[RMDB]
RNA sequence: GGGAACGACUCGAGUAGAGUCGAAAAACAUCAUGAAUGAGUCAGGUCUUUCUGCAAUAAAAGAAGAGCUUAAAAGAGUUUUAAUUCUCAUGUGGAUUCUUAUUUACGAUGUGACUAACAAUCAGGCGGUCAUCAGGGUGUUCGCACCCUGAUGACCAAAAGAAACAACAACAACAAC
Reactivity to 2A3 in 0.01 (KOAc 150mM, MgCl2 10mM, bicine 150mM(pH8.5), 24C), signal-to-noise 1, nucleotides 027 to 126: a010c000a000u000c000a000u150g000a000a050u000g000a000g040u000c000a020g150g300u120c000u000u300u000c010u140g020c040a090a000u140a110a150a000a000g000a000a000g040a020g180c080u090u130a000a090a090a000g110a100g000u110u130u160u120a030a190u090u000c000u060c000a060u000g110u120g090g040a020u300u000c000u000u000a040u000u020u110a020c060g040a000u020g000u040g110a060c000u000a010a040c010a000a120u180c000a000g000g240c000
Structure probing data (2A3) for a 177-nucleotide construct. The reactions ran in a buffer of 150 mM KOAc, 10 mM MgCl2 and 150 mM bicine (pH 8.5), at 24 C. 2A3 adducts were read by reverse transcription with SuperScript II with manganese. Source: RMDB library OK1LIB, as collected in RNAgym.